This 177-nucleotide RNA was probed chemically with 2A3. For 2A3 the reverse transcriptase was SuperScript II with manganese. Values cover nucleotides 27 to 126. The RNA was probed in 150 mM KOAc, 10 mM MgCl2 and 150 mM bicine (pH 8.5) at 24 C. The 2A3 profile rests on 303 reads.

[RMDB]
RNA sequence: GGGAACGACUCGAGUAGAGUCGAAAACACAUUGAAGAGAUAAGCCUCUCAGAAGGAAGAUAACCAUAGAAAGUUGAAAAGAGAAACCUCUUUAGAUGCUGGUUUAUUAAGAAGAAUGAAGGCAGAUCCGGGUAUAGGAUUUCGAUCCUAUACCCGGAAAAGAAACAACAACAACAAC
Reactivity to 2A3 in 0.01 (KOAc 150mM, MgCl2 10mM, bicine 150mM(pH8.5), 24C), signal-to-noise 1, nucleotides 027 to 126: c090a000c040a060u210u300g080a150a020g040a050g000a010u010a170a070g000c040c000u040c000u000c000a050g060a130a010g060g060a030a000g030a030u040a090a040c000c000a000u040a250g270a050a180a030g110u090u100g010a120a160a000a000g010a000g080a060a060a150c010c000u000c040u010u000u100a060g000a000u080g000c030u000g010g000u020u190u020a080u000u050a110a000g050a060a030g000a030a050u130g000a050a000g040g000c000a040g000a040u000